[RMDB]
RNA sequence: GGGAACGACUCGAGUAGAGUCGAAAAGAGGGCAAAACACAAGAUGAGCGAUUGACGAGCUCGUUCGUUUAACGAAUAGUGUAGGGGAGAGUAAGAAGCCAUCCCAUCAGUUAGUAAGUAGGGUAAGAUGAAGAACAGGGUUCGCCCUGUUCUUCAUAAAAGAAACAACAACAACAAC
Reactivity to DMS in 0.01 (KOAc 150mM, MgCl2 10mM, bicine 150mM(pH8.5), 24C), signal-to-noise 7, nucleotides 027 to 126: g000a130g020g000g010c060a080a040a120a090c080a060c090a100a080g020a050u010g000a030g010c010g010a110u010u020g030a080c170g010a160g000c050u000c010g000u010u000c010g010u000u020u020a070a070c070g010a040a040u020a090g030u000g010u010a050g020g010g010g000a050g010a070g010u010a040a050g000a090a080g010c040c040a120u000c010c020c010a100u030c140a070g010u010u010a090g010u000a040a080g000u010a060g010g000g000u010a070a090g000
Reactivity to 2A3 in 0.01 (KOAc 150mM, MgCl2 10mM, bicine 150mM(pH8.5), 24C), signal-to-noise 4, nucleotides 027 to 126: g080a020g020g020g010c030a040a040a030a010c050a020c000a020a040g050a140u100g030a000g010c020g060a080u030u160g130a130c060g020a030g020c020u000c030g000u050u010c000g010u020u090u170a110a080c040g020a030a020u050a110g040u030g040u050a050g000g020g000g000a050g000a010g020u040a040a020g040a020a000g010c030c000a040u020c000c010c020a000u100c020a020g090u040u180a040g030u050a110a050g000u020a060g020g020g020u030a060a060g040

Overview
The record gives the reactivity of an RNA of 177 nucleotides to DMS and 2A3. For 2A3 the reverse transcriptase was SuperScript II with manganese. The reactions ran in a buffer of 150 mM KOAc, 10 mM MgCl2 and 150 mM bicine (pH 8.5), at 24 C. For DMS the reverse transcriptase was MarathonRT.